[RMDB]
RNA sequence: GGGAACGACUCGAGUAGAGUCGAAAAGAUAUGGACACGAUAAGAUAAACUCCAACAGCUCGGAAACGAGACAUGGAGCACUAUCUUUUGACGUGUCCUAAGUCAAAGGGUGAGUUCGCUCACCCAAGCGAACCUUGUAGUUCGCUACAAGGUUCGCAAAAGAAACAACAACAACAAC
Reactivity to DMS in 0.01 (KOAc 150mM, MgCl2 10mM, bicine 150mM(pH8.5), 24C), signal-to-noise 1, nucleotides 027 to 126: g010a020u010a300u010g000g010a000c000a040c000g050a060u000a030a010g040a000u010a000a120a240c000u000c000c000a050a120c300a070g000c000u000c010g000g060a090a120a260c000g000a050g020a000c060a230u000g000g060a030g030c070a160c160u000a000u000c000u000u000u000u030g010a120c090g030u000g000u000c000c030u000a060a050g010u000c060a070a100a100g000g000g070u000g000a020g010u000u010c210g030c040u000c000a010c000c000c000a050a030
Reactivity to 2A3 in 0.01 (KOAc 150mM, MgCl2 10mM, bicine 150mM(pH8.5), 24C), signal-to-noise 1, nucleotides 027 to 126: g000a010u120a030u110g000g000a000c010a030c020g070a090u000a100a010g010a010u020a030a120a050c000u000c010c000a100a110c060a250g040c010u000c000g070g020a040a080a060c030g010a030g040a040c080a110u060g010g000a010g050c020a020c070u010a010u030c000u040u040u020u140g190a090c000g030u010g000u040c000c020u000a060a000g040u040c040a100a050a070g020g040g010u010g000a010g020u100u260c290g190c160u000c000a000c000c050c000a000a000